[RMDB]
RNA sequence: GGGAACGACUCGAGUAGAGUCGAAAACAAUUAUUGAAAACAGCAGUGAUACAAUCAAUUUGCUAACCGUUCAUGCAGCAAAAGGACUUGAGUUUGAAGCUGUAUUUAUUUAUGGCAUGAAUCAAGGGUAUCAGUAGUCGUUCGCGACUACUGAUACAAAAGAAACAACAACAACAAC
Reactivity to DMS in 0.01 (KOAc 150mM, MgCl2 10mM, bicine 150mM(pH8.5), 24C), signal-to-noise 2, nucleotides 027 to 126: c110a110a080u010u010a100u010u000g000a060a020a030a070c100a010g000c000a050g040u000g010a030u000a130c100a050a060u000c060a020a030u020u000u000g010c010u000a100a110c110c050g000u010u010c030a000u000g020c070a030g010c060a020a010a030a060g010g020a060c120u000u000g000a060g020u000u000u020g010a170a140g010c000u000g000u000a000u020u000u000a080u020u000u010a050u000g000g000c010a040u010g010a050a030u010c080a040a110g000g010
Reactivity to 2A3 in 0.01 (KOAc 150mM, MgCl2 10mM, bicine 150mM(pH8.5), 24C), signal-to-noise 2, nucleotides 027 to 126: c000a040a030u210u130a070u060u190g060a020a080a030a040c010a000g060c000a010g060u050g150a050u010a210c020a040a120u030c010a010a040u140u030u050g000c000u020a010a110c040c050g020u060u060c020a020u000g000c010a000g000c000a050a010a010a070g090g040a050c060u080u140g010a050g170u110u130u250g070a050a030g000c000u000g020u020a070u050u140u030a150u050u060u040a080u050g030g050c000a010u050g040a000a020u060c020a000a020g160g000
The data come from the RNA Mapping Database (RMDB), library OK2TST. Chemical mapping of a 177-nucleotide RNA with DMS and 2A3. Values are in units of 0.01, from 0 to 300, in steps of 10. The reactions ran in a buffer of 150 mM KOAc, 10 mM MgCl2 and 150 mM bicine (pH 8.5), at 24 C. The DMS profile rests on 1,066 reads. For DMS the reverse transcriptase was MarathonRT.